About this RNA: The record gives the reactivity of an RNA of 177 nucleotides to 2A3 and DMS. Source: RMDB libraries RFM100 and RFMREP, as collected in RNAgym. The RNA was probed in 150 mM KOAc, 10 mM MgCl2 and 150 mM bicine (pH 8.5) at 24 C.
[RMDB]
RNA sequence: GGGAACGACUCGAGUAGAGUCGAAAAUUGGGUAGAGCACUCGUUUUUGGAACGAAUGGUAGCCGGUUCAAAUCCGGUCAACUCAUCCUUGAAAGAUGAAAAAACGCAAAGACUGGCCUCACAGGUACUAGUUACAGUCUUUCGAGACUGUAACUAGAAAAGAAACAACAACAACAAC
Reactivity to 2A3 in 0.01 (KOAc 150mM, MgCl2 10mM, bicine 150mM(pH8.5), 24C), signal-to-noise 6, nucleotides 027 to 126: u100u050g050g000g000u090a070g020a020g070c030a010c040u010c030g030u020u020u010u060u150g160g050a090a020c030g030a060a050u070g040g010u060a020g010c000c000g010g010u040u100c050a060a060a020u020c000c000g000g000u030c000a000a040c010u010c010a020u020c010c000u030u060g180a140a070a020g050a000u070g020a040a040a050a010a020a000c080g010c080a050a030a020g040a070c040u050g050g000c020c000u040c010a060c010a010g050g010u050a050
Reactivity to DMS in 0.01 (KOAc 150mM, MgCl2 10mM, bicine 150mM(pH8.5), 24C), signal-to-noise 5, nucleotides 027 to 126: u030u030g010g000g030u020a060g010a070g000c020a070c070u000c050g020u000u010u000u030u010g030g000a060a100c030g000a040a070u010g000g010u020a160g010c010c000g010g000u020u020c280a060a300a130u020c010c010g010g010u010c080a110a100c100u010c020a020u000c000c010u010u030g020a110a100a070g000a040u000g000a000a050a060a030a090a050c080g000c150a060a090a060g010a050c020u010g010g010c090c020u010c050a070c110a050g000g010u010a110